[RMDB]
The record gives the reactivity of an RNA of 177 nucleotides to DMS and 2A3. For 2A3, 13,139 sequencing reads were counted. It was measured as part of the RMDB library OK2TRN. 2A3 adducts were read by reverse transcription with SuperScript II with manganese. For DMS, 11,470 sequencing reads were counted.

RNA sequence: GGGAACGACUCGAGUAGAGUCGAAAAGCUAGCUAGCUGAGUACUGACGUCUCAGGUACCAUGGCUGUCAGGUACGCUAGGUACGAUAGUAUCACAUGAUCUAGCUAGCAUGCUAGCUGAUCCUAGCUCCUAUCAAGAACUUCGGUUCUUGAUAGGAAAAAGAAACAACAACAACAAC
Reactivity to DMS in 0.01 (KOAc 150mM, MgCl2 10mM, bicine 150mM(pH8.5), 24C), signal-to-noise 7, nucleotides 027 to 126: g010c000u000a010g010c010u000a070g020c030u000g000a300g010u000a020c010u010g010a080c100g010u000c010u000c090a050g000g010u000a020c050c030a100u000g020g010c130u010g010u000c060a090g020g010u000a010c030g020c030u000a040g010g000u000a010c050g010a110u010a030g010u000a260u000c070a140c110a070u010g010a070u010c010u000a010g000c010u000a000g010c020a090u010g010c020u000a020g010c050u000g000a110u000c130c010u000a030g000c050
Reactivity to 2A3 in 0.01 (KOAc 150mM, MgCl2 10mM, bicine 150mM(pH8.5), 24C), signal-to-noise 6, nucleotides 027 to 126: g000c000u010a010g000c000u010a010g010c010u010g040a020g060u040a020c010u040g110a030c040g020u000c020u010c070a050g080g030u060a060c030c040a170u130g070g000c100u090g150u180c030a030g050g100u030a020c050g030c160u050a070g020g040u030a010c020g030a050u030a060g070u040a040u150c070a070c040a260u180g020a070u060c000u010a000g010c000u010a000g000c000a010u030g010c010u020a010g000c030u020g010a030u010c000c000u000a020g010c030